This 177-nucleotide RNA was probed chemically with 2A3 and DMS. Values cover nucleotides 27 to 126. Source: RMDB library OK1LIB, as collected in RNAgym.

RNA sequence: GGGAACGACUCGAGUAGAGUCGAAAAGCGUCGAUGCUAGGGAUAACACACGAACUCUCUCAGACCUAGCAUCGAUGAUGAGAGAGAAGGUGUGGAGAUAAAUAAAGCGGAAACGCGAAAAUAAAAAGGGAUUAGAUAAGUUCGCUUAUCUAAUCCCAAAAGAAACAACAACAACAAC
Reactivity to 2A3 in 0.01 (KOAc 150mM, MgCl2 10mM, bicine 150mM(pH8.5), 24C), signal-to-noise 6, nucleotides 027 to 126: g060c010g020u010c000g020a000u020g010c010u010a030g010g040g110a090u100a220a040c050a000c010a000c060g090a290a110c060u040c010u000c000u000c030a070g040a210c010c030u030a010g030c010a010u010c010g000a000u010g000a000u030g000a000g000a000g000a000g010a040a140g070g000u050g010u030g050g030a060g090a110u200a070a090a000u180a110a080a010g020c010g020g040a030a030a040c020g000c010g050a020a010a040a040u270a020a040a000a010a000
Reactivity to DMS in 0.01 (KOAc 150mM, MgCl2 10mM, bicine 150mM(pH8.5), 24C), signal-to-noise 4, nucleotides 027 to 126: g000c030g000u010c020g000a280u040g010c000u000a050g000g000g020a130u060a110a080c130a010c070a090c110g000a080a140c010u010c030u010c030u000c040a080g000a230c060c050u020a060g020c080a040u020c040g010a010u020g010a090u030g000a040g000a000g020a010g020a080a070g010g000u000g000u000g000g000a090g020a080u030a050a140a080u030a050a080a080g020c000g000g000a130a050a080c040g030c010g000a040a080a080a070u060a020a050a050a070a070